[RMDB]
RNA sequence: GGGAACGACUCGAGUAGAGUCGAAAAUGCAUGCUGUGGGAGCAGAGACUGAGUUGGGGAUGGGCCAGCUCUGUGCCCCCACAUCAUAGAGCAAACAGGGCCCCCACCCUUCUCCAAGAGGCCAAGCCUCGGUCUGAGCAGGAAAGGAUCCAACGUAAAAUAAAUGACUGUUCGCAGUCAUUUAUUUAAAAGAAACAACAACAACAAC
Reactivity to 2A3 in 0.01 (KOAc 150mM, MgCl2 10mM, bicine 150mM(pH8.5), 24C), signal-to-noise 2, nucleotides 027 to 156: u090g020c000a020u030g000c010u030g010u010g000g000g010a030g030c010a010g040a020g030a160c010u060g030a090g180u040u100g090g030g010g020a040u130g030g010g030c000c000a020g010c010u000c000u000g000u030g030c040c010c000c010c030a020c010a010u020c000a000u010a030g090a020g030c030a050a090a100c060a100g070g000g050c020c010c000c010c000a080c000c010c000u030u020c010u000c010c020a050a040g000a010g040g000c060c100a090a040g020c000c020u020c010g000g010u020c040u050g010a010g010c020a010g050g000a080a030a030g040g020a030u060c040c010a030a050c060g100u150a070
Reactivity to DMS in 0.01 (KOAc 150mM, MgCl2 10mM, bicine 150mM(pH8.5), 24C), signal-to-noise 2, nucleotides 027 to 156: u020g010c010a080u010g010c070u000g020u000g030g010g000a130g030c060a100g000a180g010a110c020u010g010a120g020u000u010g010g000g010g010a130u000g010g010g030c010c000a040g010c030u000c000u010g010u000g000c020c010c020c000c030a060c040a030u000c020a070u000a120g030a090g000c010a080a160a180c070a150g000g010g000c020c020c000c050c050a190c040c000c040u010u040c030u000c020c100a090a240g020a080g010g010c010c110a130a180g000c010c000u000c030g000g010u000c070u000g010a120g020c070a100g030g000a070a120a100g010g030a080u000c010c020a040a130c050g000u000a090
Source: RMDB library OK3TST, as collected in RNAgym. Structure probing data (2A3 and DMS) for a 207-nucleotide construct. DMS adducts were read by reverse transcription with MarathonRT. 2A3 adducts were read by reverse transcription with SuperScript II with manganese. High DMS reactivity at an A or C suggests that its Watson-Crick edge is free. The RNA was probed in 150 mM KOAc, 10 mM MgCl2 and 150 mM bicine (pH 8.5) at 24 C.